[RMDB]
Chemical mapping of a 177-nucleotide RNA with 2A3 and DMS.
The 2A3 profile rests on 1,155 reads.
For DMS, 1,653 sequencing reads were counted.
The RNA was probed in 150 mM KOAc, 10 mM MgCl2 and 150 mM bicine (pH 8.5) at 24 C.
For 2A3 the reverse transcriptase was SuperScript II with manganese.

RNA sequence: GGGAACGACUCGAGUAGAGUCGAAAAACGGGGAACAGCGGGUGGUCCGUGAGCUCGGCCACGGCGCGCGGGGAGCAGUAGGCCUCCAGGGCGGCGGCCGCGGGCGCCGCCGUGUGGCUGGGCCCCGCUUACGGUCCCAGUUCGCUGGGACCGUAAGAAAAGAAACAACAACAACAAC
Reactivity to 2A3 in 0.01 (KOAc 150mM, MgCl2 10mM, bicine 150mM(pH8.5), 24C), signal-to-noise 1, nucleotides 027 to 126: a000c010g000g000g030g030a080a030c030a110g050c040g030g070g000u110g050g030u060c010c000g020u040g080a060g010c040u030c080g100g000c030c000a090c030g070g000c010g030c010g030c000g010g010g010g040a120g000c060a070g040u250a180g060g030c010c000u000c020c030a050g080g180g010c010g040g000c000g040g030c040c030g040c090g060g110g030c050g000c010c000g000c000c050g000u050g000u020g100g000c000u010g000g000g000c000c000c000c020g010
Reactivity to DMS in 0.01 (KOAc 150mM, MgCl2 10mM, bicine 150mM(pH8.5), 24C), signal-to-noise 1, nucleotides 027 to 126: a240c040g000g010g020g030a080a080c080a020g010c010g010g000g000u040g000g020u030c060c030g030u030g010a040g000c000u080c290g010g000c010c000a070c080g000g010c040g000c090g000c100g000g010g040g010a090g000c060a140g000u010a080g000g010c000c000u020c010c050a180g000g000g000c140g000g000c050g000g000c000c000g000c300g020g020g010c120g060c000c000g030c040c000g000u000g000u000g000g030c000u000g000g000g000c000c050c000c000g000